[RMDB]
RNA sequence: GGGAACGACUCGAGUAGAGUCGAAAAGAUAUGGACCUGAAUGUCUUUUGACGAUCUAAGUCGGAAACGAUGAUGGAUCGAUAAGACACAGGUCCUAAGUCAAAAGGUUGCGGUUCGCCGCAACCAACUUUGAUAACUACUUCGGUAGUUAUCAAAGAAAAGAAACAACAACAACAAC
Reactivity to DMS in 0.01 (KOAc 150mM, MgCl2 10mM, bicine 150mM(pH8.5), 24C), signal-to-noise 5, nucleotides 027 to 126: g010a040u000a290u010g010g000a000c000c000u000g010a170a160u000g010u000c000u000u000u000u010g010a190c110g010a010u000c000u000a120a300g010u000c000g010g000a090a050a090c010g010a010u000g000a290u010g010g000a000u000c000g010a070u000a010a010g010a010c010a080c010a010g000g010u000c000c000u000a000a060g010u010c040a090a070a130a090g010g000u000u000g010c000g000g000u000u010c220g020c020c000g000c000a000a000c010c000a010a040
Reactivity to 2A3 in 0.01 (KOAc 150mM, MgCl2 10mM, bicine 150mM(pH8.5), 24C), signal-to-noise 6, nucleotides 027 to 126: g020a010u050a030u110g000g010a000c000c010u070g140a300a210u050g030u000c050u030u200u170u260g300a160c050g000a000u000c010u040a090a000g020u000c010g010g010a050a050a020c030g010a010u060g060a090u300g040g000a010u010c000g020a040u070a110a000g000a000c000a000c000a010g000g020u000c000c000u000a010a000g010u000c010a000a020a000a210g000g000u010u000g000c000g000g100u020u080c300g030c080c000g000c000a000a010c000c000a000a000